[RMDB]
RNA sequence: GGGAACGACUCGAGUAGAGUCGAAAACUUGUCGCGCAUCAUUACCUGCUCAAGUACCUGACGGACUCGUAGCGUGGAUUGGGGAGCAUCUUUGUCUGGGUAAUUAGCUUUAUCGGCAUAGUGCUGCAAAACUUGAGACACUUUUGCAAAUGAUUGCACCUAGCAGUCCUUUCGAGGACUGCUAGGUAAAAGAAACAACAACAACAAC
Reactivity to DMS in 0.01 (KOAc 150mM, MgCl2 10mM, bicine 150mM(pH8.5), 24C), signal-to-noise 1, nucleotides 027 to 156: c040u000u000g040u010c030g020c010g010c050a170u000c020a110u000u000a080c060c030u030g000c000u000c020a040a080g020u000a120c030c020u000g010a110c100g030g050a110c070u000c050g020u000a060g010c100g000u000g010g010a190u010u010g000g020g000g000a080g000c060a050u000c030u000u010u000g040u010c020u030g070g010g000u020a060a080u000u000a160g040c080u000u000u010a050u020c050g040g000c010a060u000a040g000u010g000c000u000g030c060a050a060a070a050c080u000u050g020a100g020a110c080a060c030u000u000u010u030g010c040a000a110a090u010g000a100u000u000g020c080
Reactivity to 2A3 in 0.01 (KOAc 150mM, MgCl2 10mM, bicine 150mM(pH8.5), 24C), signal-to-noise 4, nucleotides 027 to 156: c020u030u060g040u070c060g000c000g000c090a030u050c020a030u130u160a100c010c020u080g040c010u010c020a000a060g010u050a140c000c030u080g090a060c060g050g060a070c020u030c140g110u110a040g000c020g050u060g050g030a120u050u110g010g000g010g010a010g010c010a040u040c020u030u060u050g070u020c050u070g070g020g010u010a050a050u040u060a050g110c140u070u080u060a060u090c020g010g000c010a010u050a060g020u030g010c020u030g010c020a020a050a070a030c030u030u050g020a010g040a060c020a060c040u060u090u050u060g040c020a030a070a140u100g090a120u120u170g010c030
An RNA of 207 nucleotides, treated with DMS and 2A3 and read out base by base. For DMS the reverse transcriptase was MarathonRT. 2A3 adducts were read by reverse transcription with SuperScript II with manganese. The RNA was probed in 150 mM KOAc, 10 mM MgCl2 and 150 mM bicine (pH 8.5) at 24 C.